The data come from the RNA Mapping Database (RMDB), library OK3TST. Chemical mapping of a 207-nucleotide RNA with 2A3 and DMS. For DMS the reverse transcriptase was MarathonRT.

RNA sequence: GGGAACGACUCGAGUAGAGUCGAAAAUGCCAGCUUGAAGAUGUUUUGCGGGCGCUUGGUCAGCCGCAGGUAGACGAGGCGCGGCGUCUUGCGCAUCACGUCGAACGCAUCGGUGCGCCACUGUGGAUCGACCUGGUUGUCGAAGAUAUCAGCGAGGCCUGGAUAGAAAUUUCGAUUUCUAUCCAGGAAAAGAAACAACAACAACAAC
Reactivity to 2A3 in 0.01 (KOAc 150mM, MgCl2 10mM, bicine 150mM(pH8.5), 24C), signal-to-noise 2, nucleotides 027 to 156: u120g030c000c010a020g010c040u060u070g040a070a090g010a090u090g130u050u100u100u220g300c150g050g000g000c050g020c040u030u050g010g000u030c030a050g040c010c010g000c030a000g070g050u190a070g030a200c100g050a060g020g030c010g010c000g050g030c010g000u030c020u010u060g000c000g000c020a070u120c040a020c070g300u230c110g050a110a020c020g010c020a030u080c050g300g050u060g000c020g000c040c000a040c030u010g000u030g050g030a110u140c070g010a010c000c040u010g080g040u120u300g070u040c010g030a010a010g000a020u030a010u070c000a010g030c020g000a030g010g000
Reactivity to DMS in 0.01 (KOAc 150mM, MgCl2 10mM, bicine 150mM(pH8.5), 24C), signal-to-noise 1, nucleotides 027 to 156: u030g000c020c010a140g020c060u000u030g000a090a150g000a070u000g020u010u000u010u020g000c080g030g040g040c020g010c000u000u000g050g000u000c000a150g000c010c000g000c010a060g000g030u010a100g030a300c090g020a150g000g000c020g040c060g020g020c030g000u000c060u010u020g010c030g070c020a120u000c000a060c100g040u010c050g030a110a170c020g010c040a040u010c040g040g030u000g040c000g030c030c030a090c020u000g020u020g030g010a070u000c060g010a020c040c010u010g010g030u000u000g040u010c010g000a060a080g020a080u000a060u000c040a110g020c020g010a100g020g000